Structure probing data (DMS and 2A3) for a 170-nucleotide construct.
RNA sequence: GGGAACGACUCGAGUAGAGUCGAAAAGUAGCUUGGCUUUACGCAGCAAUACUUAAUGGUUGCGCUUGGUUUGUAAAACCUAAUCGCACUAGUGUUGUUUCUUUUAAUGAAUGGGCUCUUGCCAACCGAACUUGGACCUUCGGGUCCAAGAAAAGAAACAACAACAACAAC
Reactivity to DMS in 0.01 (KOAc 150mM, MgCl2 10mM, bicine 150mM(pH8.5), 24C), signal-to-noise 2, nucleotides 027 to 129: g060u100a040g210c210u000u000g000g000c000u000u000u000a030c010g000c180a000g060c300a000a230u110a000c000u000u000a040a300u000g000g000u210u160g000c180g000c300u000u000g080g080u000u000u060g160u130a000a000a000a150c150c000u000a160a300u110c000g180c000a000c010u010a000g000u060g030u000u000g230u000u300u000c000u000u000u000u000a000a220u000g000a010a140u000g000g000g000c000u000c030u030u000g020c300c000a120a290c180c070g000a130a000
Reactivity to 2A3 in 0.01 (KOAc 150mM, MgCl2 10mM, bicine 150mM(pH8.5), 24C), signal-to-noise 1, nucleotides 027 to 129: g020u110a000g050c000u080u080g000g000c000u020u000u180a160c210g000c000a110g000c000a000a170u060a000c000u160u130a020a020u140g100g000u210u060g000c000g000c060u000u000g080g300u050u250u010g300u200a300a300a010a000c000c000u000a000a000u000c000g140c000a000c010u000a000g000u000g000u000u000g000u000u000u000c000u000u000u000u130a210a080u080g140a140a000u150g000g000g040c030u030c190u300u100g000c000c000a030a030c000c010g000a000a020
The reactions ran in a buffer of 150 mM KOAc, 10 mM MgCl2 and 150 mM bicine (pH 8.5), at 24 C.
In probing experiments dimethyl sulfate is read out at A N1 and C N3, which are open when not base-paired.